Source: RMDB library OK3TST, as collected in RNAgym. The record gives the reactivity of an RNA of 207 nucleotides to DMS and 2A3. For DMS, 2,021 sequencing reads were counted.
[RMDB]
RNA sequence: GGGAACGACUCGAGUAGAGUCGAAAACAAUUGCACUGCAAGGCCGAACCGACAUUGUUGGACAGCGGCCCGGAAUGGCCAUGUUUGGUGGCGAUGCGGGCUGGGUCGGCGUCGUGGAUGAGAUGAAGCGAUGCGGCAAGCUCCCGAGCAGGUGGCCGUUGAAGCGUAUAUUCGUAUACGCUUCAACAAAAGAAACAACAACAACAAC
Reactivity to DMS in 0.01 (KOAc 150mM, MgCl2 10mM, bicine 150mM(pH8.5), 24C), signal-to-noise 1, nucleotides 027 to 156: c040a070a100u000u000g000c030a140c060u020g020c020a030a180g040g010c020c010g030a060a140c090c010g000a110c040a150u000u020g030u020u010g040g010a100c020a080g000c000g030g030c030c000c000g000g030a100a050u000g030g030c010c000a090u000g010u000u010u010g090g010u020g000g010c000g010a080u010g000c040g040g010g050c000u000g030g040g020u010c000g000g060c000g010u010c030g010u000g000g000a160u000g010a270g000a200u010g020a300a270g000c000g020a020u020g010c000g010g040c020a080a040g000c040u000c010c010c010g010a190g010c010a070g020g020u010g010g030c040c110
Reactivity to 2A3 in 0.01 (KOAc 150mM, MgCl2 10mM, bicine 150mM(pH8.5), 24C), signal-to-noise 2, nucleotides 027 to 156: c030a030a140u140u160g000c070a050c150u100g010c090a100a060g050g000c000c040g090a070a040c000c000g030a040c070a250u060u140g020u060u200g020g040a030c040a070g110c030g000g000c000c000c000g010g080a180a030u090g080g000c030c000a030u030g250u190u190u230g300g000u030g000g000c040g000a020u090g020c050g010g000g000c030u060g120g000g000u000c020g120g000c000g000u000c000g000u010g030g030a050u110g130a080g060a090u100g030a020a010g010c000g010a000u000g010c010g030g000c010a020a010g000c000u020c000c000c000g010a060g020c050a010g080g220u050g030g000c020c010
Values are in units of 0.01, from 0 to 300, in steps of 10.